[RMDB]
RNA sequence: GGGAACGACUCGAGUAGAGUCGAAAAGAAUCAAACGGAAGGGACGGAUGGUAUCUUCGGAUGCCAUAGAUAGAUGGCUACCGCUCUUGGUGCGAGGGAUACGUCCCGCUUGCAGCACGGGAGAGACGUGUAAAGAAAAGUUCGCUUUUCUUUACACAAAAGAAACAACAACAACAAC
Reactivity to DMS in 0.01 (KOAc 150mM, MgCl2 10mM, bicine 150mM(pH8.5), 24C), signal-to-noise 6, nucleotides 027 to 126: g010a110a100u010c080a070a090a130c090g000g000a100a060g020g000g010a070c060g000g000a040u000g010g010u000a020u000c010u000u020c160g030g010a050u000g000c000c000a010u000a030g000a150u010a080g000a080u000g010g010c060u000a120c040c040g000c020u000c020u000u000g020g050u000g010c040g000a050g020g010g000a040u000a060c190g020u000c000c010c000g000c240u000u010g020c120a050g000c010a030c020g000g000g000a040g000a110g010a090c230
Reactivity to 2A3 in 0.01 (KOAc 150mM, MgCl2 10mM, bicine 150mM(pH8.5), 24C), signal-to-noise 6, nucleotides 027 to 126: g040a020a080u120c050a060a040a060c070g030g030a030a040g050g000g050a010c040g050g030a010u020g010g010u020a020u020c010u030u050c130g100g000a010u030g000c000c000a010u010a010g060a000u070a020g120a040u060g040g000c040u060a070c010c020g020c030u000c010u040u050g220g010u020g010c010g010a060g000g000g000a010u020a060c150g090u030c000c010c010g000c010u030u070g010c020a010g020c000a000c000g020g030g000a020g000a000g010a020c100